[RMDB]
Conditions: 150 mM KOAc, 10 mM MgCl2 and 150 mM bicine (pH 8.5), 24 C. This 177-nucleotide RNA was probed chemically with DMS and 2A3. Values cover nucleotides 27 to 126. It was measured as part of the RMDB libraries RFM100 and RFMREP. For DMS the reverse transcriptase was MarathonRT.
RNA sequence: GGGAACGACUCGAGUAGAGUCGAAAACAAGGGGUCUGGAGGAAGCCGAUAGCAAAACACUGGCCUGAUGAACAAGAAGCAGAUACUAGGCUUAUUCGAUGGGUAAAAGGUCUCAAAUACUCAAAGCACCUAAACUUAGAUUCGUCUAAGUUUAGGUAAAAGAAACAACAACAACAAC
Reactivity to DMS in 0.01 (KOAc 150mM, MgCl2 10mM, bicine 150mM(pH8.5), 24C), signal-to-noise 9, nucleotides 027 to 126: c110a100a090g010g000g010g010u010c030u010g010g010a080g010g000a080a110g010c050c030g010a070u020a070g010c070a050a060a080a080c130a070c070u010g010g010c030c020u000g000a090u010g010a080a080c150a070a080g010a060a070g000c040a050g010a110u020a070c100u010a070g010g010c020u000u000a090u010u010c060g000a080u010g010g000g010u010a030a050a060a080g010g000u000c020u010c040a030a050a100u010a040c050u000c060a050a070a100g010c210
Reactivity to 2A3 in 0.01 (KOAc 150mM, MgCl2 10mM, bicine 150mM(pH8.5), 24C), signal-to-noise 9, nucleotides 027 to 126: c050a060a060g030g010g000g020u030c040u060g050g010a030g010g040a050a020g020c010c010g060a080u110a020g040c040a020a050a040a030c080a030c040u050g040g010c020c010u070g030a090u080g030a060a030c050a090a070g120a050a010g040c040a010g020a080u040a080c040u070a050g050g000c000u030u030a040u070u070c040g030a050u080g010g000g030u040a040a080a050a070g030g020u010c010u010c030a100a130a020u110a050c020u030c070a060a070a010g050c040